RNA sequence: GGGAACGACUCGAGUAGAGUCGAAAAGCCCGGCCUUUGUUGUUCUUUUGUACCAUUUUGUGUACUGUUUUUCAGAUUUUAAAGUAAAUGGAGAUAUGAAAAAAGAAAAACAAAGUUAAGGGAACGAAAAGCAAGGAAUAAGACAAUUAUAAAAGUAGGUCAGUAUUAUCUUCGGAUAAUACUGACCAAAAGAAACAACAACAACAAC
Reactivity to 2A3 in 0.01 (KOAc 150mM, MgCl2 10mM, bicine 150mM(pH8.5), 24C), signal-to-noise 1, nucleotides 027 to 156: g030c010c000c000g100g000c020c070u100u020u080g020u010u000g000u010u020c000u050u020u010u040g030u060a000c010c000a120u040u020u070u020g230u060g040u080a040c040u010g030u050u100u000u090u090c000a010g030a060u030u150u080u210a090a150a050g080u140a000a170a110u070g040g050a030g010a030u150a040u210g060a000a060a000a040a090a130g000a000a050a000a000a000c000a000a000a000g010u090u060a000a040g030g000g010a110a020c010g080a040a100a000a000g010c000a000a000g040g010a080a050u060a020a010g070a010c000a030a030u290u200a070u300a180a080a180a030g080u260a040